[RMDB]
RNA sequence: GGGAACGACUCGAGUAGAGUCGAAAAAGCAACGAGUGUGUGUGGGACGUUUUAUCCCAAGCUCUGAGUAGAGCACGCGCUCACACACACCGCCAGCGAGCAUCAGCAGAGCGCAAACGCUGGUAAAUUAGUGUGAAGACUUCGGUCUUCACACUAAAAAAGAAACAACAACAACAAC
Reactivity to DMS in 0.01 (KOAc 150mM, MgCl2 10mM, bicine 150mM(pH8.5), 24C), signal-to-noise 2, nucleotides 027 to 126: a120g010c220a050a210c060g000a170g000u000g020u000g010u000g010u000g000g010g000a110c010g010u000u010u010u000a130u020c030c040c050a120a130g000c000u000c000u000g010a180g020u000a020g020a000g020c000a110c200g000c020g020c000u000c010a000c020a010c000a030c010a000c010c060g040c000c020a020g010c000g010a120g000c010a110u000c050a140g030c140a090g000a020g010c170g030c010a060a060a140c020g000c000u000g000g020u010a010a040a170
Reactivity to 2A3 in 0.01 (KOAc 150mM, MgCl2 10mM, bicine 150mM(pH8.5), 24C), signal-to-noise 1, nucleotides 027 to 126: a020g140c060a050a030c030g130a170g050u020g010u010g020u010g000u030g000g040g040a080c010g020u050u000u060u250a100u020c000c020c000a010a000g000c010u010c000u020g300a300g140u300a020g130a010g050c050a000c070g020c020g000c000u030c000a000c000a000c000a000c000a000c000c000g000c010c000a020g000c000g050a010g010c010a040u130c050a020g200c050a060g060a030g160c110g010c080a120a100a030c020g000c000u000g000g010u030a040a000a040

Notes: The record gives the reactivity of an RNA of 177 nucleotides to DMS and 2A3. 2A3 adducts were read by reverse transcription with SuperScript II with manganese. It was measured as part of the RMDB library M2PK90.